[RMDB]
RNA sequence: GGGAACGACUCGAGUAGAGUCGAAAAUUCUCCUAAGAAAAAGGAUGAACUAAUUGCAGGGCCUAGCCUAAGCUCUGAGAAGUCAUUCGUUAUAGCAUUUCAGUCCAUAGUAAACAAGAAGAAAUGAGGUAAAGAGUUUAAACCAGGGAAGGCAUAACUUUUAAUCGUCAUUCGUGACGAUUAAAAGAAAAGAAACAACAACAACAAC
Reactivity to 2A3 in 0.01 (KOAc 150mM, MgCl2 10mM, bicine 150mM(pH8.5), 24C), signal-to-noise 4, nucleotides 027 to 156: u010u000c030u060c010c010u160a170a110g080a120a200a020a020a000g030g010a010u030g020a060a060c040u080a170a070u160u140g040c010a000g000g000g020c000c020u040a030g000c060c040u040a060a020g010c000u000c010u000g040a050g030a040a000g010u010c010a010u060u020c000g060u110u110a110u110a140g090c060a080u030u080u140c020a040g040u000c060c010a050u060a070g090u140a080a130a130c100a090a040g110a050a000g020a050a060a070u060g010a020g010g030u050a010a070a060g050a000g000u040u050u130a090a080a020c020c020a000g030g020g020a000a030g020g010c040a020u080a100a030
Reactivity to DMS in 0.01 (KOAc 150mM, MgCl2 10mM, bicine 150mM(pH8.5), 24C), signal-to-noise 2, nucleotides 027 to 156: u000u000c020u000c040c050u030a110a120g050a090a110a110a120a130g020g020a040u000g000a070a120c050u010a080a140u030u010g010c030a040g010g020g010c000c010u000a080g020c090c050u000a090a080g010c020u000c000u020g000a050g030a080a090g000u000c020a020u000u000c030g010u000u010a100u000a140g040c020a100u000u000u000c020a160g010u010c060c040a090u000a120g010u000a080a060a130c030a040a090g020a110a170g000a050a090a040u000g000a080g000g030u000a060a030a100g010a050g010u000u000u000a050a100a090c020c020a050g000g010g000a040a070g000g010c020a090u020a070a100